[RMDB]
RNA sequence: GGGAACGACUCGAGUAGAGUCGAAAAGCCACGCUAUUCGUAGCGUGGCGGUUAAGAUCUAGACAAAAACUGACAAAAAGUCUAGAUCAAAUAAAGUCUGAACGGUCCGGGAUUUCGAUCCCGGAAACAUAAAAGAUCCAUUCGUGGAUCUUUUAUGAAAAGAAACAACAACAACAAC
Reactivity to 2A3 in 0.01 (KOAc 150mM, MgCl2 10mM, bicine 150mM(pH8.5), 24C), signal-to-noise 2, nucleotides 027 to 126: g000c010c000a000c010g000c000u020a030u060u090c180g120u030a010g000c000g000u010g000g000c000g020g000u070u020a070a010g000a000u000c000u010a000g010a000c020a010a230a030a090a100c080u120g070a030c080a020a220a010a020a020g000u000c000u000a000g000a010u000c000a000a000a000u050a000a050a000g070u000c070u080g100a120a030c030g070g030u000c000c000g020g020g020a030u100u140u090c170g030a020u050c000c000c000g000g010a000a000a000
Reactivity to DMS in 0.01 (KOAc 150mM, MgCl2 10mM, bicine 150mM(pH8.5), 24C), signal-to-noise 5, nucleotides 027 to 126: g010c000c000a000c000g010c010u000a030u000u020c180g020u000a000g010c010g050u000g010g010c000g010g000u000u000a110a120g010a020u000c000u000a000g000a020c000a030a100a070a110a100c200u020g020a080c180a080a120a120a090a070g000u000c000u010a000g000a000u000c010a030a060a090u000a060a100a130g000u000c080u000g000a070a110c200g010g000u000c000c000g010g000g000a020u000u000u010c150g000a040u000c000c000c000g010g000a000a020a090
The record gives the reactivity of an RNA of 177 nucleotides to 2A3 and DMS. For 2A3, 2,785 sequencing reads were counted. Reactivities are given for positions 27 through 126. The reactions ran in a buffer of 150 mM KOAc, 10 mM MgCl2 and 150 mM bicine (pH 8.5), at 24 C. For DMS, 5,010 sequencing reads were counted. 2A3 adducts were read by reverse transcription with SuperScript II with manganese. It was measured as part of the RMDB library M2PK50.